Source information: Structure probing data (2A3) for a 207-nucleotide construct. Conditions: 150 mM KOAc, 10 mM MgCl2 and 150 mM bicine (pH 8.5), 24 C. Reactivities are given for positions 27 through 156.
RNA sequence: GGGAACGACUCGAGUAGAGUCGAAAAUCACGACCUCGGGUACGGUAACAGCGUCGAGAGAUGAGGCCGUUCCCCCCCCCCACCCAUGGGUGGCCGGGGGGCGCGGCGGAAAUGGGUGAUCCGCAGCCAAGUCCUACGGCCGGGCAGCCAGCCCGCGGAACGUAUACAUCUUCGGAUGUAUACGUUCAAAAGAAACAACAACAACAAC
Reactivity to 2A3 in 0.01 (KOAc 150mM, MgCl2 10mM, bicine 150mM(pH8.5), 24C), signal-to-noise 1, nucleotides 027 to 156: u100c020a010c060g020a060c020c040u000c020g010g010g020u090a080c040g030g060u100a110a100c090a040g040c010g060u070c070g030a060g010a020g030a140u100g020a100g060g040c030c000g000u000u010c020c000c010c000c000c000c010c000c000c030a020c080c040c020a100u120g130g010g030u040g080g000c100c030g000g000g000g000g020g000c020g000c010g020g010c060g000g020a080a100a030u190g010g020g030u090g030a090u010c000c000g010c050a020g000c010c000a080a000g050u030c030c000u060a030c020g030g000c000c020g040g040g000c010a030g030c060c000a090g050c010c030c010g020c020g010